Chemical mapping of a 207-nucleotide RNA with 2A3.
RNA sequence: GGGAACGACUCGAGUAGAGUCGAAAAGAAAACAAAUCGCUUAAUCUGAAAUCAGAGCGGGGGACCCAAUAGAACGGCUUUUUGCCGUUGGGGUGAAUCCUUUUUAGGUAGGGCUAACUCUCAUAUGCCCGAAUCCGUCAGCUAACCUCGUAAGCGUCUUGCGCUAGAGGUUCGCCUCUAGCGCAAGAAAAGAAACAACAACAACAAC
Reactivity to 2A3 in 0.01 (KOAc 150mM, MgCl2 10mM, bicine 150mM(pH8.5), 24C), signal-to-noise 2, nucleotides 027 to 156: g030a000a050a000a010c060a000a060a090u150c030g010c000u010u000a010a000u000c010u010g100a230a090a070u300c010a000g010a010g030c000g000g000g010g000g000a010c030c000c000a030a040u090a060g200a030a010c000g000g020c050u080u250u020u300u300g000c020c000g010u000u000g000g000g000g020u020g000a010a040u040c000c000u060u100u090u280u300a030g010g000u000a000g000g010g000c020u010a090a030c030u040c000u000c120a030u060a060u200g030c040c000c000g000a030a000u010c010c000g120u070c030a000g000c030u000a010a030c000c020u000c010g010u010a000a010g000c000g020u000